[RMDB]
Description:
Structure probing data (2A3) for a 207-nucleotide construct.
RNA sequence: GGGAACGACUCGAGUAGAGUCGAAAAUGGGGGGCUCGCACUGCGCCCCAGCUCCUAGAUGCGCGCGGGGCGAGAGGGGCCCCACGCUGCCCUGGGUGCAUAAAGAGCUGGGCAGCCAGGUUCACACCAGAUGGCCUUUGCCCGCCUCCUUCACCUACCCAUAAUUUUAUUUCGAUAAAAUUAUGGGAAAAGAAACAACAACAACAAC
Reactivity to 2A3 in 0.01 (KOAc 150mM, MgCl2 10mM, bicine 150mM(pH8.5), 24C), signal-to-noise 1, nucleotides 027 to 156: u120g010g040g000g020g000g000c000u000c000g110c010a060c060u120g050c000g000c060c000c000c000a000g000c000u040c030c020u070a170g020a300u150g030c050g000c020g010c100g050g000g020g010c020g000a030g010a010g000g010g020g030c000c000c000c000a010c000g020c000u060g000c000c000c030u030g020g010g000u030g020c020a030u080a210a050a000g030a010g000c000u090g030g010g000c010a000g020c010c000a000g050g020u280u300c060a090c010a020c130c010a030g080a240u060g000g000c010c030u070u130u060g010c000c010c000g020c010c010u000c000c000u040u130c010a050c030c000u070a060